[RMDB]
This 177-nucleotide RNA was probed chemically with 2A3 and DMS. Source: RMDB libraries RFM100 and RFMREP, as collected in RNAgym. The reactions ran in a buffer of 150 mM KOAc, 10 mM MgCl2 and 150 mM bicine (pH 8.5), at 24 C.
RNA sequence: GGGAACGACUCGAGUAGAGUCGAAAAUACGAUGACGAGAAUGACGGUUUUCUUCGAUUUGGGUACCAAAGUUCUUUUGGUAUUUGAUGAGAAGCGACCUCAACGUGAUUCUAAAUGAGGCAUUUGAAUUUAUAGCACACUUCGGUGUGCUAUAAAUAAAAGAAACAACAACAACAAC
Reactivity to 2A3 in 0.01 (KOAc 150mM, MgCl2 10mM, bicine 150mM(pH8.5), 24C), signal-to-noise 6, nucleotides 027 to 126: u170a030c070g060a050u050g100a000c030g010a030g090a280a110u050g020a030c160g030g010u040u030u070u100c000u000u010c000g020a010u000u000u010g030g010g020u000a000c000c000a040a010a000g100u290u270c090u060u060u040u000g000g000u000a000u000u010u020g030a030u000g010a000g000a010a000g020c000g010a010c000c000u000c000a030a020c040g040u060g030a070u130u000c040u100a070a110a110u200g050a100g120g030c090a080u020u030u130g080a050
Reactivity to DMS in 0.01 (KOAc 150mM, MgCl2 10mM, bicine 150mM(pH8.5), 24C), signal-to-noise 6, nucleotides 027 to 126: u020a080c170g000a030u010g010a080c060g000a080g000a080a080u010g020a030c160g000g000u000u000u020u030c000u000u000c000g010a300u000u010u000g000g030g010u000a010c000c000a000a000a020g020u030u030c140u030u000u000u000g000g020u010a000u000u010u000g010a010u000g000a300g000a020a000g010c300g000a040c030c010u000c000a050a050c040g000u010g000a020u010u000c030u030a020a110a060u020g010a050g020g000c090a090u010u000u010g000a140